RNA sequence: GGGAACGACUCGAGUAGAGUCGAAAAACCGUGUGCCAGGCCCUGUCCCGUCACUGUAGACACACAGUCAGGGCCUGCUGAGGACACGGGCGAGGGGAGCACCCUUGCCAGCCAUCCUAGGGUCAUGAGCCUGAAUCUUCUUCGGAAGAUUCAGGCUAAAAGAAACAACAACAACAAC
Reactivity to DMS in 0.01 (KOAc 150mM, MgCl2 10mM, bicine 150mM(pH8.5), 24C), signal-to-noise 1, nucleotides 027 to 126: a060c050c000g050u000g000u000g000c070c010a010g000g000c020c000c000u000g010u000c000c050c110g050u030c110a040c120u010g060u020a120g010a010c160a020c200a110c300a070g000u020c000a050g000g000g010c000c000u000g010c070u000g010a080g030g000a020c210a020c040g000g000g000c030g000a000g010g000g010g000a300g010c250a140c030c000c010u010u000g010c000c000a090g000c040c070a140u020c010c020u000a100g020g020g010u020c130a080u010g000